[RMDB]
RNA sequence: GGGAACGACUCGAGUAGAGUCGAAAAAAUGCUUUUACACUGGGUGACUCCUUCUAACAUCACCACAAUCUUCCAGUUCUAUGGAGAAUGCACUGAUUAGUUAUGGAAAAAUACUCUGAGCUACAGCUAGAUUCUUUCCAUUCGUGGAAAGAAUCUAAAAAGAAACAACAACAACAAC
Reactivity to DMS in 0.01 (KOAc 150mM, MgCl2 10mM, bicine 150mM(pH8.5), 24C), signal-to-noise 6, nucleotides 027 to 126: a050a050u010g000c040u010u020u020u020a100c090a090c080u010g000g010g020u000g000a130c110u000c020c030u010u000c070u000a070a050c070a070u020c030a050c290c050a080c170a050a030u020c020u000u010c000c000a030g020u020u020c150u030a090u000g000g010a030g000a060a050u010g000c030a090c140u010g010a070u000u010a050g010u020u000a040u020g000g000a010a030a060a040a090u030a050c040u000c020u000g000a070g000c030u000a060c140a060g020c150
Reactivity to 2A3 in 0.01 (KOAc 150mM, MgCl2 10mM, bicine 150mM(pH8.5), 24C), signal-to-noise 9, nucleotides 027 to 126: a000a000u130g010c040u080u070u060u100a050c080a030c060u090g040g000g020u040g070a070c040u020c010c000u030u070c020u050a060a030c010a060u040c010a010c120c020a030c060a040a050u010c020u130u050c020c010a070g040u150u090c060u130a140u090g020g010a020g030a090a050u050g000c040a030c070u010g010a110u050u060a020g060u020u070a040u120g020g030a040a070a010a010a020u100a050c010u000c010u030g030a010g020c030u040a050c030a030g020c010